[RMDB]
RNA sequence: GGGAACGACUCGAGUAGAGUCGAAAAGUGCUUGAGCACUGUCGUUGCGACGAGAGUUCGAUGCGAUCCGGAAAGCAUUUGCUCUGAUGUCGAUCCGGAAAGACAUCCUUUGUGCUCUUGCACGAAAGGGUCUGCCGAGGUUCGCCUUGGUAGACCCAAAAGAAACAACAACAACAAC
Reactivity to DMS in 0.01 (KOAc 150mM, MgCl2 10mM, bicine 150mM(pH8.5), 24C), signal-to-noise 8, nucleotides 027 to 126: g000u000g010c010u000u000g010a020g000c000a010c000u010g010u000c020g010u020u010g020c110g020a040c020g020a050g010a080g020u060u020c190g010a000u010g010c020g000a300u000c010c000g000g000a020a130a270g010c000a000u000u000u030g030c140u020c200u010g000a020u000g000u040c020g010a200u000c000c000g010g000a010a110a200g000a220c000a020u000c010c060u010u010u020g010u000g010c000u000c010u000u000g000c000a000c000g000a030a060a070
Reactivity to 2A3 in 0.01 (KOAc 150mM, MgCl2 10mM, bicine 150mM(pH8.5), 24C), signal-to-noise 9, nucleotides 027 to 126: g000u000g000c000u000u010g000a000g000c000a020c030u040g040u020c020g080u080u220g130c160g050a010c010g010a010g000a010g100u130u260c070g010a010u010g010c010g050a150u000c010c000g010g000a020a020a010g000c000a020u010u040u240g090c070u080c080u140g010a010u010g120u230c010g000a040u000c000c000g000g070a020a010a010g040a040c000a010u030c000c010u050u050u080g000u000g000c000u000c000u000u000g000c000a000c000g000a040a000a010
This 177-nucleotide RNA was probed chemically with DMS and 2A3. Reactivities are given for positions 27 through 126. The DMS profile rests on 26,968 reads. Source: RMDB library OK1LIB, as collected in RNAgym. The 2A3 profile rests on 47,452 reads. DMS adducts were read by reverse transcription with MarathonRT. Reactivities are rounded to 0.1 and cut off at 0 and 3.